An RNA of 177 nucleotides, treated with DMS and 2A3 and read out base by base. DMS (dimethyl sulfate) methylates the pairing face of unpaired adenines and cytosines. The RNA was probed in 150 mM KOAc, 10 mM MgCl2 and 150 mM bicine (pH 8.5) at 24 C. It was measured as part of the RMDB library TTRDEL. DMS adducts were read by reverse transcription with MarathonRT.
RNA sequence: GGGAACGACUCGAGUAGAGUCGAAAAGAUAUGGAUCGGACAUGGAGCUCUAUCGGAAACGAUGAGAGCUGCGAAGUGUUCCGAUCCUAAGUCAAAACUGUAGAUUAAGUUCGCUUAAUCUACAGAACCUAAUUUCAUUCUUCGGAAUGAAAUUAGGAAAAGAAACAACAACAACAAC
Reactivity to DMS in 0.01 (KOAc 150mM, MgCl2 10mM, bicine 150mM(pH8.5), 24C), signal-to-noise 6, nucleotides 027 to 126: g010a030u000a290u010g000g000a010u000c000g010g000a020c010a010u000g010g010a030g020c000u000c000u000a070u000c000g000g000a070a070a100c010g000a000u000g000a020g000a000g010c000u000g020c220g010a140a160g000u000g000u010u000c000c000g000a000u000c000c000u000a000a060g000u000c020a090a070a110a150c010u000g000u000a010g000a020u000u000a010a010g000u000u010c250g010c000u000u000a010a000u000c000u000a000c000a010g000a040a120
Reactivity to 2A3 in 0.01 (KOAc 150mM, MgCl2 10mM, bicine 150mM(pH8.5), 24C), signal-to-noise 6, nucleotides 027 to 126: g010a010u040a020u110g000g000a000u000c000g010g000a000c010a020u080g120g110a010g000c000u000c000u010a010u020c010g010g030a060a020a030c010g010a020u180g300a040g000a000g040c000u010g030c030g100a120a040g000u010g060u300u040c000c000g000a000u000c000c000u000a010a000g010u000c010a010a010a120a190c010u000g000u010a000g000a010u000u000a010a000g030u030u070c130g050c140u000u010a000a000u000c000u020a000c000a000g000a000a000